[RMDB]
Notes:
Structure probing data (2A3 and DMS) for a 177-nucleotide construct. 2A3 is a SHAPE reagent: it acylates the 2'-hydroxyl of flexible nucleotides of all four kinds. 2A3 adducts were read by reverse transcription with SuperScript II with manganese.
RNA sequence: GGGAACGACUCGAGUAGAGUCGAAAACACUACUACAAGACCUUCGAGGACCUGCGGGACAAGAUUCUUGGUGCCGUCAAUGAGAACUCCAGGAUUGUCCUGCAGAUCAACAAUGCCUGUCUGGCUGCACACUCACAUUGUUCGCAAUGUGAGUGUGAAAAGAAACAACAACAACAAC
Reactivity to 2A3 in 0.01 (KOAc 150mM, MgCl2 10mM, bicine 150mM(pH8.5), 24C), signal-to-noise 3, nucleotides 027 to 126: c040a030c040u260a020c010u040a060c060a100a020g050a060c020c010u080u110c090g050a090g020g020a030c020c000u000g010c010g000g010g000a010c000a010a080g060a240u110u030c020u000u030g040g060u030g040c100c040g140u140c060a070a230u300g040a120g010a200a040c030u020c020c000a000g010g000a020u030u000g010u010c000c000u000g010c000a010g000a000u010c000a010a050c010a050a110u090g000c010c020u090g030u140c050u050g010g000c010u020g060
Reactivity to DMS in 0.01 (KOAc 150mM, MgCl2 10mM, bicine 150mM(pH8.5), 24C), signal-to-noise 1, nucleotides 027 to 126: c150a130c080u000a110c100u000a060c070a070a050g000a050c040c010u000u000c130g000a160g010g000a020c010c010u000g000c000g010g000g020a020c020a020a040g020a160u000u000c010u000u000g010g000u000g020c130c040g020u000c070a140a140u000g010a100g000a060a100c020u000c000c020a030g010g010a050u000u000g000u000c000c000u000g000c020a010g000a040u000c050a100a090c170a050a060u010g000c050c020u000g000u000c120u000g010g000c070u000g040